[RMDB]
RNA sequence: GGGAACGACUCGAGUAGAGUCGAAAACGCGCCUGAAGCGCGGCUUAGUAAGGGGUGACGCAACCGUGCAUGGCACUCGCACGAGUGCCAGCUGGAGCACUCAACCGGGGAAGUUCGAUGUUCUGAAUCUGCGAAUGACGUUUGAAUCGUCAUCCGCACUGAUAGGAUAGUUCGCUAUCCUAUCAGUAAAAGAAACAACAACAACAAC
Reactivity to DMS in 0.01 (KOAc 150mM, MgCl2 10mM, bicine 150mM(pH8.5), 24C), signal-to-noise 2, nucleotides 027 to 156: c010g020c020g030c010c030u020g000a020a220g000c030g130c000g020g000c050u000u000a110g020u000a100a130g010g000g020g020u000g000a070c110g010c040a100a160c000c020g100u020g010c020a160u000g010g010c010a020c070u000c000g000c230a160c180g010a030g050u000g000c020c020a050g030c010u000g010g020a240g010c030a060c050u000c010a100a160c030c020g000g010g000g010a130a220g000u010u000c070g030a210u000g000u010u000c050u000g010a070a260u000c030u010g070c000g030a010a000u000g010a010c000g020u000u000u000g000a130a230u020c000g020u000c010a010u010c000c000g030c020
Reactivity to 2A3 in 0.01 (KOAc 150mM, MgCl2 10mM, bicine 150mM(pH8.5), 24C), signal-to-noise 4, nucleotides 027 to 156: c010g020c000g050c010c070u280g080a170a080g020c010g000c000g020g030c040u090u140a060g020u130a140a100g020g030g000g020u050g020a080c080g030c090a040a110c030c010g070u020g020c080a290u020g000g000c000a010c010u010c030g070c080a100c210g000a000g000u000g000c000c000a000g000c000u010g020g010a020g010c010a010c010u050c030a020a110c040c020g000g000g000g020a070a060g000u070u120c080g060a090u100g020u040u040c080u050g040a040a060u030c020u050g000c000g010a030a000u010g000a000c010g020u020u070u240g150a130a090u130c000g010u000c000a000u010c000c000g000c000